[RMDB]
RNA sequence: GGGAACGACUCGAGUAGAGUCGAAAAGCGAAUCCAUACCGGCGAGAAGCCAUACCAAUGCCAGUACUGUGAAUAUAGGUCUGCAGACUCUUCUAACUUGAAAACACAUAUAAAAACAAAGCAUAGUAAAGAGAUGCCAUUCAAGUGUGACAUUUGAGACUAGCCAUACUUUCGAGUAUGGCUAGUCAAAAGAAACAACAACAACAAC
Reactivity to DMS in 0.01 (KOAc 150mM, MgCl2 10mM, bicine 150mM(pH8.5), 24C), signal-to-noise 1, nucleotides 027 to 156: g010c030g000a080a070u000c050c020a180u000a080c130c090g030g000c060g010a130g000a070a170g010c040c030a100u030a240c010c010a010a030u000g030c020c040a090g010u000a060c060u040g020u000g000a130a110u000a110u040a050g040g010u000c050u000g000c050a080g010a050c000u000c020u000u000c010u000a040a060c050u020u000g010a090a020a020a150c060a030c020a120u000a160u000a000a060a080a130a100c040a110a120a060g000c030a050u000a110g000u010a000a060a110g040a140g020a200u010g000c020c000a100u010u000c040a060a130g050u000g000u000g000a040c020a050u000u000u000g000a240
Reactivity to 2A3 in 0.01 (KOAc 150mM, MgCl2 10mM, bicine 150mM(pH8.5), 24C), signal-to-noise 3, nucleotides 027 to 156: g080c040g050a070a020u020c010c010a060u110a120c060c060g030g000c020g020a070g060a090a010g020c020c010a060u110a020c010c000a040a090u090g030c020c000a010g020u080a030c020u080g030u060g170a080a000u130a020u020a110g090g000u020c040u020g050c010a010g080a170c000u040c000u090u020c020u060a040a020c000u030u060g030a020a020a140a020c060a030c020a030u190a020u110a210a130a040a060a000c060a050a050a000g000c010a030u040a010g060u140a010a000a060g040a000g010a000u000g020c010c020a020u040u070c050a060a010g010u030g000u020g080a050c020a100u090u040u090g080a090